[RMDB]
RNA sequence: GGGAACGACUCGAGUAGAGUCGAAAAGAUUACGUGUCGUUGUGGAAUCGAUACUACGCACGAGAUUCCAAGGUCUCUGUAGUACGUCCGCUGGUGACGUCUUUGGAGUCACGCUCGAUAUACGAAAGGUAAGUACUACGUUCGCGUAGUACUUACCAAAAGAAACAACAACAACAAC
Reactivity to DMS in 0.01 (KOAc 150mM, MgCl2 10mM, bicine 150mM(pH8.5), 24C), signal-to-noise 3, nucleotides 027 to 126: g000a130u040u000a050c090g020u010g010u000c040g000u010u000g040u000g000g010a060a050u040c070g020a100u000a000c030u000a000c000g010c220a080c070g000a090g010a020u000u000c110c230a080a090g000g000u010c020u000c030u040g000u010a010g000u010a010c000g000u000c010c000g030c060u000g010g000u000g000a000c010g000u000c040u010u040u040g010g010a100g000u020c000a030c020g030c080u000c000g020a030u010a040u020a080c040g000a070a140a070
Reactivity to 2A3 in 0.01 (KOAc 150mM, MgCl2 10mM, bicine 150mM(pH8.5), 24C), signal-to-noise 5, nucleotides 027 to 126: g060a060u080u120a040c040g020u070g050u060c030g030u060u090g000u030g030g040a020a020u130c030g010a040u010a040c020u010a010c040g030c050a040c160g010a020g000a040u070u060c140c050a080a050g070g000u010c000u010c000u020g010u010a010g010u020a020c000g010u000c000c010g000c110u110g110g060u110g070a010c040g080u030c020u040u060u190g060g010a030g000u020c000a000c080g040c000u030c020g020a020u010a010u020a100c090g040a070a040a010
The record gives the reactivity of an RNA of 177 nucleotides to DMS and 2A3.
Reactivities are rounded to 0.1 and cut off at 0 and 3.
The RNA was probed in 150 mM KOAc, 10 mM MgCl2 and 150 mM bicine (pH 8.5) at 24 C.
DMS adducts were read by reverse transcription with MarathonRT.